Chemical mapping of a 177-nucleotide RNA with DMS and 2A3. The data come from the RNA Mapping Database (RMDB), library RFMREP. DMS adducts were read by reverse transcription with MarathonRT.
RNA sequence: GGGAACGACUCGAGUAGAGUCGAAAAGUGAGAAUGCAGGCAUGAGUAGCGAAAGACGAGUGAGAAACUCGUCCGCCGAAUGACCAAGGGUUCCUGGGCCAGGUUAAUCCGCCCAGGGUGAGUCGGGGUCCAUAAAAUGGUUCGCCAUUUUAUGGACAAAAGAAACAACAACAACAAC
Reactivity to DMS in 0.01 (KOAc 150mM, MgCl2 10mM, bicine 150mM(pH8.5), 24C), signal-to-noise 4, nucleotides 027 to 126: g020u010g010a120g010a080a080u010g000c060a030g010g000c020a060u010g010a130g030u000a080g010c020g010a080a190a130g010a020c000g010a020g000u000g000a220g000a100a110a030c000u000c000g010u000c010c060g020c170c020g010a090a070u010g000a070c050c030a100a100g000g000g000u000u000c010c000u000g010g000g010c030c090a150g030g010u000u000a090a110u000c010c020g000c010c000c000a010g010g000g010u000g000a040g000u000c020g010g010g010
Reactivity to 2A3 in 0.01 (KOAc 150mM, MgCl2 10mM, bicine 150mM(pH8.5), 24C), signal-to-noise 2, nucleotides 027 to 126: g080u070g010a070g060a060a090u080g040c060a030g000g030c010a050u040g030a020g050u140a030g070c020g040a140a080a020g000a000c010g010a010g000u030g020a120g180a100a110a000c000u000c000g000u000c010c000g020c020c010g020a040a050u060g060a140c030c010a030a050g040g000g010u080u060c010c000u010g000g010g010c070c140a060g040g050u060u150a100a040u070c000c010g000c010c010c000a000g000g000g010u030g010a000g040u010c020g020g030g030